Structure probing data (2A3 and DMS) for a 207-nucleotide construct. The DMS profile rests on 2,212 reads. DMS adducts were read by reverse transcription with MarathonRT. Values cover nucleotides 27 to 156. The RNA was probed in 150 mM KOAc, 10 mM MgCl2 and 150 mM bicine (pH 8.5) at 24 C. The 2A3 profile rests on 1,561 reads.

[RMDB]
RNA sequence: GGGAACGACUCGAGUAGAGUCGAAAAUUGCUCUUAUUGUUAAUAGCUGUAUAUUUGAUUUCAGUUCAAGGAAAGCUAAGUACAGUAUCUGACAUGAAAGAAUAAUUCAGUAUCCUUGGGUCAAGAAGCUGAAUAAAUGAAUACCUUAGAAAAGGAACCAUACCUACUCGUUCGCGAGUAGGUAUGGAAAAGAAACAACAACAACAAC
Reactivity to 2A3 in 0.01 (KOAc 150mM, MgCl2 10mM, bicine 150mM(pH8.5), 24C), signal-to-noise 3, nucleotides 027 to 156: u070u070g030c030u000c010u000u110a060u040u040g010u020u040a100a070u030a180g020c000u020g020u020a040u050a110u100u070u040g060a040u040u070u030c030a050g140u110u150c090a110a040g100g000a080a010a000g000c020u030a010a030g020u000a010c010a000g000u040a080u010c090u040g020a020c020a030u060g030a090a090a030g030a050a050u090a080a060u060u040c010a000g010u010a100u080c020c000u030u040g110g020g080u130c020a000a040g010a040a020g060c010u000g010a020a030u070a070a080a030u090g020a040a060u120a270c010c000u020u040a070g160a090a190a020a010g030g010a000a010
Reactivity to DMS in 0.01 (KOAc 150mM, MgCl2 10mM, bicine 150mM(pH8.5), 24C), signal-to-noise 2, nucleotides 027 to 156: u000u010g040c000u000c020u010u000a250u010u040g000u020u000a080a130u010a170g050c000u000g010u010a020u000a150u000u000u000g000a060u000u000u010c000a100g000u030u000c300a150a190g010g000a060a080a040g010c020u000a050a080g000u000a030c010a050g020u000a060u000c150u000g030a040c040a060u010g010a120a130a130g010a100a080u010a020a100u000u000c020a060g040u000a130u000c000c010u010u010g000g000g030u000c080a040a090g010a030a170g000c020u000g000a050a060u000a010a090a120u000g010a070a170u020a090c010c000u000u000a080g090a120a100a040a020g010g000a150a290